[RMDB]
RNA sequence: GGGAACGACUCGAGUAGAGUCGAAAAGCAUAGCGUCAAGUUGGUUGACCAGAAGUGUGGUUAGCAAACAGAGUAAAACCAAAAGGUUAGACGCACUCUGUGAAAAAGUACGAAAGUACAAAGAUAACAACUGUUGGGGAUUCGUCCCCAACAGUUGAAAAGAAACAACAACAACAAC
Reactivity to DMS in 0.01 (KOAc 150mM, MgCl2 10mM, bicine 150mM(pH8.5), 24C), signal-to-noise 1, nucleotides 027 to 126: g070c080a090u000a090g040c040g000u000c030a140a140g050u000u000g060g000u010u000g010a050c000c000a090g030a070a110g000u000g040u000g010g000u000u010a010g010c020a080a020a010c000a100g000a090g010u030a060a090a050a060c080c030a060a060a130a090g000g000u000u010a030g010a080c010g010c050a210c020u000c030u010g000u000g000a030a040a050a090a150g000u010a000c010g000a150a060a200g000u000a050c000a070a100a090g000a120u010a140a100